RNA sequence: GGGAACGACUCGAGUAGAGUCGAAAAGGCCAGCAGAGCGAUGUGCAUCCGUUCGCGAACCUGAUCGCGGUCGACGAUGAGCGCGCCGAACGCCGCGACGACGAAGAACGUCAGGAAGCCGUCCAGCCGCCACUCGAAUAUUCGUAUUCGAGUGGCGAAAAGAAACAACAACAACAAC
Reactivity to 2A3 in 0.01 (KOAc 150mM, MgCl2 10mM, bicine 150mM(pH8.5), 24C), signal-to-noise 1, nucleotides 027 to 126: g060g000c000c000a020g000c030a010g030a010g060c010g050a080u070g100u160g040c020a050u030c020c010g000u020u040c010g010c000g060a060a080c010c040u130g040a220u070c020g020c030g000g040u060c040g010a100c030g040a100u060g060a050g090c040g000c000g000c040c030g010a050a000c050g000c000c000g000c020g010a000c000g000a030c020g050a050a090g000a110a050c030g020u050c030a010g060g010a060a010g030c020c040g010u000c000c000a010g060c000
Reactivity to DMS in 0.01 (KOAc 150mM, MgCl2 10mM, bicine 150mM(pH8.5), 24C), signal-to-noise 1, nucleotides 027 to 126: g030g000c000c040a150g010c070a140g000a150g000c060g000a080u000g010u000g000c070a100u000c070c020g000u000u020c010g040c040g000a070a170c120c140u000g000a090u010c020g010c060g030g010u010c030g010a050c060g000a090u000g000a150g000c040g050c040g000c070c090g050a040a100c090g030c050c020g000c040g030a060c030g010a090c040g000a070a030g000a040a100c110g000u000c030a030g000g000a100a100g020c020c020g010u000c040c000a130g000c130